Conditions: 150 mM KOAc, 10 mM MgCl2 and 150 mM bicine (pH 8.5), 24 C.
Structure probing data (DMS and 2A3) for a 177-nucleotide construct.
Values cover nucleotides 27 to 126.
RNA sequence: GGGAACGACUCGAGUAGAGUCGAAAACGCAGUCUCUGGCGGAGCAGAUGAGGAAGAUCGCCUUGGAGUCCGAGGGGCGCCCUGAGGCAAGCCUGUGCCCCUCCCGCCACCUGGGACCACGGCCAGCACCUAACGCUUCAUUCGUGAAGCGUUAGGUAAAAGAAACAACAACAACAAC
Reactivity to DMS in 0.01 (KOAc 150mM, MgCl2 10mM, bicine 150mM(pH8.5), 24C), signal-to-noise 3, nucleotides 027 to 126: c030g040c060a100g010u000c020u000c020u000g010g010c030g010g000a070g040c070a080g000a080u010g000a050g000g000a120a130g010a120u010c160g010c020c020u000u010g000g010a190g000u000c020c040g000a040g020g010g000g000c070g020c040c170c080u010g000a090g000g030c020a070a100g000c040c110u000g000u000g010c000c000c020c040u000c010c060c000g020c040c040a060c200c140u030g000g010g000a040c020c020a120c050g000g000c020c030a100g020c190
Reactivity to 2A3 in 0.01 (KOAc 150mM, MgCl2 10mM, bicine 150mM(pH8.5), 24C), signal-to-noise 2, nucleotides 027 to 126: c000g000c020a020g040u000c010u000c000u060g050g000c010g010g020a030g080c050a020g010a070u120g030a060g060g000a030a080g110a260u170c110g020c020c020u020u050g090g000a030g040u000c020c000g020a020g040g000g000g020c030g040c030c000c030u100g050a100g040g070c070a080a040g060c000c050u060g040u050g010c030c040c000c020u000c010c000c000g000c000c000a020c020c090u030g020g000g010a010c010c020a010c020g040g000c000c000a080g030c050
Values are in units of 0.01, from 0 to 300, in steps of 10.